Source information:
Source: RMDB library TTRDEL, as collected in RNAgym. This 177-nucleotide RNA was probed chemically with 2A3 and DMS. Conditions: 150 mM KOAc, 10 mM MgCl2 and 150 mM bicine (pH 8.5), 24 C.
[RMDB]
RNA sequence: GGGAACGACUCGAGUAGAGUCGAAAAGAUAUGGAUCCCAUGAUGUCCCUGGAACGUUGAAAUCGGAAACGAUGGAGUUCCCUGGACGUAGUGGGAUCCUAAGUCAAAAUCGGCGUUCGCGCCGAAACUUGUCAUAGUGGUUCGCCACUAUGACAAGAAAAGAAACAACAACAACAAC
Reactivity to 2A3 in 0.01 (KOAc 150mM, MgCl2 10mM, bicine 150mM(pH8.5), 24C), signal-to-noise 1, nucleotides 027 to 126: g020a010u060a060u160g010g000a010u030c030c040c050a010u030g020a010u050g000u000c000c020c030u010g000g000a020a010c000g150u300u050g000a040a040a010u010c020g030g000a070a030a080c020g000a010u010g050g000a020g010u010u010c000c020c000u010g000g020a010c000g020u020a000g000u000g000g000g000a000u000c000c000u010a000a000g010u000c010a000a010a020a260u040c010g010g010c020g020u090u130c300g020c010g020c130c010g010a000a000a010
Reactivity to DMS in 0.01 (KOAc 150mM, MgCl2 10mM, bicine 150mM(pH8.5), 24C), signal-to-noise 3, nucleotides 027 to 126: g000a060u000a300u010g000g000a010u000c000c000c000a000u000g000a140u000g000u000c000c000c030u000g010g010a010a010c000g010u010u010g000a090a170a010u000c020g000g010a170a090a190c000g010a010u000g010g010a090g000u000u000c000c000c030u000g000g010a020c010g000u000a090g020u000g010g000g000a000u000c000c000u010a010a060g000u010c050a100a080a140a110u000c000g000g020c000g030u020u000c230g000c020g020c000c000g010a010a030a060